[RMDB]
Conditions: 150 mM KOAc, 10 mM MgCl2 and 150 mM bicine (pH 8.5), 24 C.
The record gives the reactivity of an RNA of 177 nucleotides to DMS and 2A3.
DMS adducts were read by reverse transcription with MarathonRT.
2A3 adducts were read by reverse transcription with SuperScript II with manganese.
It was measured as part of the RMDB library OK1LIB.
RNA sequence: GGGAACGACUCGAGUAGAGUCGAAAACUUUCAGGAUCAGUCGCGGUCUUCCAAACUUUACCGAGAGUAUGGACGAAUCCCUCACUUCAUCCAUAUGUGUAAAAGACACUAGCCGCACUUAAAAGCCACAAGGAAGGUGAUUCGUCACCUUCCUUGUAAAAGAAACAACAACAACAAC
Reactivity to DMS in 0.01 (KOAc 150mM, MgCl2 10mM, bicine 150mM(pH8.5), 24C), signal-to-noise 5, nucleotides 027 to 126: c070u020u000u010c070a060g020g000a070u010c090a040g010u000c080g030c030g000g000u020c070u020u020c120c120a050a130a120c090u000u000u000a050c040c090g020a140g020a120g020u010a010u000g010g010a030c060g010a050a010u030c050c020c030u000c040a050c080u020u000c010a070u000c000c000a030u010a010u010g010u030g010u000a040a010a030a060g000a130c100a040c110u010a100g010c050c010g020c010a050c060u020u010a070a060a090a140g010c060c090
Reactivity to 2A3 in 0.01 (KOAc 150mM, MgCl2 10mM, bicine 150mM(pH8.5), 24C), signal-to-noise 7, nucleotides 027 to 126: c040u080u130u110c070a080g040g040a080u050c040a010g030u060c040g030c020g050g020u040c010u110u030c040c020a100a140a090c050u070u110u090a100c040c050g050a060g010a030g200u030a030u040g000g010a000c020g000a000a030u130c030c030c000u050c020a070c030u020u010c000a030u000c010c030a010u020a030u090g110u010g020u050a040a080a040a020g090a010c010a010c060u030a020g010c010c000g010c000a010c000u030u060a060a050a040a050g060c010c010